[RMDB]
RNA sequence: GGGAACGACUCGAGUAGAGUCGAAAAUUAGAACGCACUACGGGAUACACUUACCACCGCCAAGGUGGUCAGCACGCAGACCGUGGUGUAGGCUCGUGUGACCACCGGGAUCUCCAGGUAGAACUGCCAGUCCGUACUGAUUCGUCAGUACGGACUGAAAAGAAACAACAACAACAAC
Reactivity to 2A3 in 0.01 (KOAc 150mM, MgCl2 10mM, bicine 150mM(pH8.5), 24C), signal-to-noise 5, nucleotides 027 to 126: u100u050a040g030a090a030c070g000c020a000c030u040a020c020g020g000g030a030u070a110c040a000c020u010u030a040c010c010a020c010c000g090c170c130a140a120g000g020u000g010g000u000c000a030g020c040a000c100g050c040a010g050a220c010c000g060u160g080g000u090g040u030a010g010g000c030u010c020g020u040g050u080g060a040c000c000a000c010c000g000g000g020a090u010c040u010c020c000a010g000g060u060a020g060a130a040c030u060g040c040
Reactivity to DMS in 0.01 (KOAc 150mM, MgCl2 10mM, bicine 150mM(pH8.5), 24C), signal-to-noise 4, nucleotides 027 to 126: u020u020a080g000a100a090c110g000c010a040c030u010a030c080g020g000g020a090u010a060c100a090c040u000u000a050c000c020a040c010c040g010c100c100a100a110g010g010u000g000g000u010c010a010g020c070a050c100g010c170a050g020a080c000c010g000u020g020g020u010g020u020a070g010g000c010u000c030g000u000g010u010g000a060c020c000a010c030c010g020g000g000a140u010c060u010c020c020a050g000g010u030a030g000a080a100c070u010g000c200
The record gives the reactivity of an RNA of 177 nucleotides to 2A3 and DMS.